This 207-nucleotide RNA was probed chemically with 2A3 and DMS. The RNA was probed in 150 mM KOAc, 10 mM MgCl2 and 150 mM bicine (pH 8.5) at 24 C. 2A3 is a SHAPE reagent: it acylates the 2'-hydroxyl of flexible nucleotides of all four kinds. The 2A3 profile rests on 2,009 reads. For DMS the reverse transcriptase was MarathonRT.
[RMDB]
RNA sequence: GGGAACGACUCGAGUAGAGUCGAAAAAGGAUAUUGUUUUUGGUGGUGCAUGGCCGUUGGUGGUGCGUGGGUUGACCUGUCUAGCGUUGAUUCAGCUAACGAGCGAGAUUAUCGCCAAUUAUUUACUUUGCCGAAGUCCUUCGGUUAAAGUUCUAAUCGAUCUAAUACAGUUCGCUGUAUUAGAUCGAAAAGAAACAACAACAACAAC
Reactivity to 2A3 in 0.01 (KOAc 150mM, MgCl2 10mM, bicine 150mM(pH8.5), 24C), signal-to-noise 3, nucleotides 027 to 156: a010g090g010a080u090a040u100u180g060u040u030u020u050u070g020g010u030g010g000u030g020c030a030u050g080g030c030c030g030u040u020g030g030u030g020g040u060g010c070g030u040g000g020g010u010u100g020a030c010c010u030g040u090c070u060a040g020c010g020u000u030g000a070u080u020c020a020g000c020u030a040a050c060g020a030g020c030g010a040g010a110u130u180a100u110c000g000c010c000a020a030u090u040a050u040u160u030a020c010u020u010u030g000c000c000g030a050a040g100u230c110c060u010u010c010g000g050u040u190a010a010a010g010u020u000c040u040a030a040u010
Reactivity to DMS in 0.01 (KOAc 150mM, MgCl2 10mM, bicine 150mM(pH8.5), 24C), signal-to-noise 1, nucleotides 027 to 156: a070g000g000a140u010a060u000u010g030u000u000u000u000u000g010g030u000g000g010u000g000c070a130u010g050g010c010c070g000u020u000g020g040u010g030g020u000g040c060g000u000g020g000g000u020u000g010a070c030c010u000g010u010c040u000a080g050c070g040u000u000g010a150u010u000c050a170g000c080u030a060a060c150g000a090g040c030g010a060g020a170u000u000a060u000c030g030c010c030a080a060u010u010a100u000u010u000a080c040u030u000u010g010c010c000g010a030a060g000u010c180c080u000u000c030g020g000u010u010a000a030a040g020u000u000c030u010a030a300u000